[RMDB]
RNA sequence: GGGAACGACUCGAGUAGAGUCGAAAACAGCAAAAAGGAACCGAUUCCCACCAAGUUCGGAAAGAGAUACCGGGCGAGGCGCUGAAGAAAGAAUCUCGCUUCAGACACCCCAAGGACUCGUCUGAAGAAUGCACGCCAUCGUUCGCGAUGGCGUGAAUCAUAGGCAAUACUUCGGUAUUGCCUAUGAAAAAGAAACAACAACAACAAC
Reactivity to DMS in 0.01 (KOAc 150mM, MgCl2 10mM, bicine 150mM(pH8.5), 24C), signal-to-noise 1, nucleotides 027 to 156: c040a260g000c050a010a040a100a080a090g010g000a080a190c060c050g000a170u000u000c000c000c030a190c000c030a090a270g010u000u000c030g050g000a080a130a060g010a150g010a130u010a040c040c000g000g010g030c030g010a270g030g000c000g020c030u010g010a090a080g010a110a040a060g000a150a060u000c030u000c050g010c000u000u000c000a010g010a160c000a080c040c000c070c070a100a190g030g000a040c060u000c070g000u010c000u000g000a040a040g030a050a020u010g020c010a000c000g010c000c000a020u000c000g000u000u010c300g050c000g010a020u000g000g000c090g070u010g010a000a030
Reactivity to 2A3 in 0.01 (KOAc 150mM, MgCl2 10mM, bicine 150mM(pH8.5), 24C), signal-to-noise 3, nucleotides 027 to 156: c010a010g080c040a020a130a120a020a000g150g050a090a040c100c030g070a130u030u020c000c000c000a020c020c020a020a080g030u030u000c000g010g000a100a080a020g030a040g000a010u060a060c020c010g000g000g000c020g000a030g000g050c080g030c040u080g050a060a040g090a100a160a070g060a070a140u010c050u030c120g030c000u010u000c000a010g010a020c010a060c030c030c040c130a060a090g010g030a050c090u070c290g010u000c010u020g000a000a010g030a040a030u100g020c010a000c010g000c010c000a000u000c000g030u040u080c200g000c000g130a000u000g030g000c010g000u000g000a000a000

Chemical mapping of a 207-nucleotide RNA with DMS and 2A3.
For 2A3, 1,484 sequencing reads were counted.
For DMS the reverse transcriptase was MarathonRT.
It was measured as part of the RMDB library M2RFPK.